[RMDB]
Source information:
Conditions: 150 mM KOAc, 10 mM MgCl2 and 150 mM bicine (pH 8.5), 24 C. An RNA of 177 nucleotides, treated with 2A3 and DMS and read out base by base.
RNA sequence: GGGAACGACUCGAGUAGAGUCGAAAAGUACUUUUUGCCCAUCCAUUUUUGACUCGUGAAUUUUUUAACAUGUGAAUUUUGACAAUCUUCUCCGUGGAAGCACCUCCUCUUCAUCGCUUCCAUUCAUUAUAAUCCAUAUAUUCGUAUAUGGAUUAUAAAAAGAAACAACAACAACAAC
Reactivity to 2A3 in 0.01 (KOAc 150mM, MgCl2 10mM, bicine 150mM(pH8.5), 24C), signal-to-noise 9, nucleotides 027 to 126: g030u120a150c060u070u110u040u120u170g050c000c000c000a030u020c020c000a080u020u030u020u030u130g060a040c010u020c070g040u050g100a130a140u060u040u040u050u090u230a160a060c060a090u100g050u050g120a110a090u080u070u060u170g030a020c030a030a040u020c010u060u010c040u040c020c020g030u030g020g010a020a000g010c010a040c000c020u060c010c020u040c050u130u080c060a120u110c060g020c020u020u000c010c000a010u010u030c000a010u000
Reactivity to DMS in 0.01 (KOAc 150mM, MgCl2 10mM, bicine 150mM(pH8.5), 24C), signal-to-noise 6, nucleotides 027 to 126: g010u010a080c070u000u000u010u020u010g010c020c000c020a120u010c050c040a090u000u000u000u000u000g000a050c040u000c040g000u010g010a080a020u000u010u000u020u010u020a060a140c090a060u010g010u010g010a050a090u000u000u010u010g000a060c080a090a060u000c030u000u000c020u000c040c120g040u010g010g010a050a050g010c050a090c100c050u000c040c030u000c060u010u000c100a090u010c120g010c020u000u000c000c010a050u010u000c080a090u000
For DMS the reverse transcriptase was MarathonRT.